[RMDB]
RNA sequence: GGGAACGACUCGAGUAGAGUCGAAAAUAUGUACGAACUUAUGUCUUUGGUUAUUGCCCCACUUUUUGUGGGUCUAGUAAUCUUACUAGUUGACCAUUGGUUAGAUGAUUAGCAGAUAACCAUGCAACAAACCGUCAUUGUUCGCAAUGACGGUUUGAAAAGAAACAACAACAACAAC
Reactivity to 2A3 in 0.01 (KOAc 150mM, MgCl2 10mM, bicine 150mM(pH8.5), 24C), signal-to-noise 5, nucleotides 027 to 126: u230a030u130g100u100a070c100g040a160a020c070u170u110a050u180g080u050c090u010u080u040g000g000u000u000a000u000u040g030c010c000c020c000a010c020u210u300u070u100u210g000u000g010g010g010u000c000u000a000g010u010a020a080u000c000u020u030a010c010u000a010g030u020u090g070a080c030c010a040u060u050g020g010u060u030a010g000a030u010g020a040u050u060a010g020c070a010g010a090u000a000a000c000c000a000u050g000c010a020a060
Reactivity to DMS in 0.01 (KOAc 150mM, MgCl2 10mM, bicine 150mM(pH8.5), 24C), signal-to-noise 4, nucleotides 027 to 126: u020a040u010g050u020a060c180g030a130a110c070u000u010a050u000g010u010c050u010u010u020g000g000u000u000a020u010u000g000c150c000c000c000a010c010u020u010u020u020u020g030u000g000g000g000u010c000u000a010g010u010a020a070u010c120u020u000a020c030u010a030g020u000u030g000a090c160c050a030u000u000g010g020u000u010a040g010a040u000g010a090u000u010a020g000c300a060g000a020u000a000a010c000c010a010u020g010c090a090a250